The data come from the RNA Mapping Database (RMDB), library OK1LIB. An RNA of 177 nucleotides, treated with 2A3 and DMS and read out base by base. As a SHAPE reagent, 2A3 marks flexible, mostly unpaired nucleotides at the ribose 2'-OH.
[RMDB]
RNA sequence: GGGAACGACUCGAGUAGAGUCGAAAAGCCGGAAUGCUCGAAAGAGGCCUACGCCGACGGGAUCGCGGGCGCGGUCGACGCGUACUGGAACUGGCAGCAGAGGCGUGCUGGCAAGCGCGACGGCAAGGAAUGCUGCCUAUUUCGAUAGGCAGCAUUCAAAAGAAACAACAACAACAAC
Reactivity to 2A3 in 0.01 (KOAc 150mM, MgCl2 10mM, bicine 150mM(pH8.5), 24C), signal-to-noise 8, nucleotides 027 to 126: g010c000c010g000g060a140a060u120g010c030u060c090g090a080a100a040g110a050g060g040c000c010u020a020c020g000c010c000g020a070c030g040g040g060a250u050c040g010c010g090g030g000c000g000c000g020g020u240c130g100a150c010g010c000g010u090a300c020u020g010g010a050a030c020u040g090g010c030a060g030c050a020g060a030g090g000c040g030u050g040c090u040g030g000c060a050a010g020c020g000c010g070a070c000g000g010c000a010a010g100
Reactivity to DMS in 0.01 (KOAc 150mM, MgCl2 10mM, bicine 150mM(pH8.5), 24C), signal-to-noise 5, nucleotides 027 to 126: g020c010c000g000g010a220a140u020g000c010u000c020g000a230a120a040g010a060g010g010c010c020u000a100c050g000c000c020g000a030c030g010g020g010a060u000c010g000c050g000g010g000c000g010c020g000g000u050c150g040a200c010g030c010g000u000a030c030u010g010g010a030a050c020u000g020g000c040a120g020c000a100g000a060g000g000c020g020u020g000c020u020g000g000c300a160a050g030c010g000c080g010a290c000g000g030c040a170a110g010
For DMS the reverse transcriptase was MarathonRT.